[RMDB]
RNA sequence: GGGAACGACUCGAGUAGAGUCGAAAAAAACAGAAACUUAAGAUUGGAUGACUUGAGUUAUAUCAAUCCCAGAGACUCAGUCAACUGGUGGUCAUACCGAGUGAGAGCAGAAGACUCUGAUCGGCUACGUCUAGCUAAUAUUCGUAUUAGCUAGACGAAAAGAAACAACAACAACAAC
Reactivity to 2A3 in 0.01 (KOAc 150mM, MgCl2 10mM, bicine 150mM(pH8.5), 24C), signal-to-noise 6, nucleotides 027 to 126: a000a000a000c210a100g160a100a150a010c050u140u080a170a040g090a190u120u240g070g040a050u040g010a030c020u110u130g020a010g010u030u040a130u020a010u220c060a080a050u020c020c000c000a010g010a000g000a020c020u010c030a020g020u020c010a020a030c030u050g040g010u060g040g020u050c020a050u070a150c010c010g020a020g070u100g080a030g010a000g010c070a040g060a300a020g040a230c010u000c010u010g050a090u010c010g030g020c060u080a050
Reactivity to DMS in 0.01 (KOAc 150mM, MgCl2 10mM, bicine 150mM(pH8.5), 24C), signal-to-noise 6, nucleotides 027 to 126: a050a050a080c170a110g000a110a080a070c100u010u010a070a090g010a110u000u010g010g000a120u000g010a030c000u000u010g010a020g010u000u000a110u010a090u000c040a040a060u000c000c000c010a170g000a070g000a020c010u000c010a030g010u000c010a050a080c080u000g000g020u010g000g010u000c070a090u000a120c040c030g000a050g000u000g010a040g010a040g030c040a140g010a100a090g000a110c020u000c000u000g010a120u000c010g010g000c110u000a060
This 177-nucleotide RNA was probed chemically with 2A3 and DMS. The RNA was probed in 150 mM KOAc, 10 mM MgCl2 and 150 mM bicine (pH 8.5) at 24 C. The data come from the RNA Mapping Database (RMDB), library OK2TRN. The DMS profile rests on 7,693 reads. 2A3 adducts were read by reverse transcription with SuperScript II with manganese. DMS adducts were read by reverse transcription with MarathonRT. Values cover nucleotides 27 to 126.